The record gives the reactivity of an RNA of 177 nucleotides to 2A3 and DMS. For DMS the reverse transcriptase was MarathonRT. The reactions ran in a buffer of 150 mM KOAc, 10 mM MgCl2 and 150 mM bicine (pH 8.5), at 24 C. For DMS, 2,053 sequencing reads were counted. It was measured as part of the RMDB library OK2TST.
RNA sequence: GGGAACGACUCGAGUAGAGUCGAAAACGACUGCAUCCGAAGCGCUUUCAGUCGCUCAAUCAAUGAAAGCCAAAGCACUUAUUUUGACACAUUUCAGUCAACGCUCUUAUGAUGCUGACUUUUUACACACUAGCAGCUAGUUCGCUAGCUGCUAGUGAAAAGAAACAACAACAACAAC
Reactivity to 2A3 in 0.01 (KOAc 150mM, MgCl2 10mM, bicine 150mM(pH8.5), 24C), signal-to-noise 4, nucleotides 027 to 126: c040g050a020c040u040g000c010a010u030c000c040g130a100a010g030c040g000c120u000u060u020c020a040g040u120c040g040c050u060c040a120a130u080c000a000a070u060g030a060a020a000g000c000c010a060a000a010g050c010a010c040u160u110a080u120u250u050u060g000a010c010a010c050a200u030u280u220c080a040g010u010c010a030a020c070g020c000u040c030u070u110a030u180g030a010u030g030c020u020g020a090c000u060u070u030u080u140a090c120a000
Reactivity to DMS in 0.01 (KOAc 150mM, MgCl2 10mM, bicine 150mM(pH8.5), 24C), signal-to-noise 3, nucleotides 027 to 126: c040g020a070c050u000g000c070a000u020c020c080g010a050a070g020c140g010c010u000u000u000c020a040g010u000c060g010c040u000c070a120a070u000c170a120a060u010g020a030a030a010g010c010c050a080a100a080g010c050a110c110u000u000a100u020u000u020u010g020a040c010a070c180a120u010u010u030c220a110g010u000c010a060a070c300g000c050u000c070u000u000a080u010g010a020u000g040c010u000g000a080c100u000u000u030u000u000a140c230a250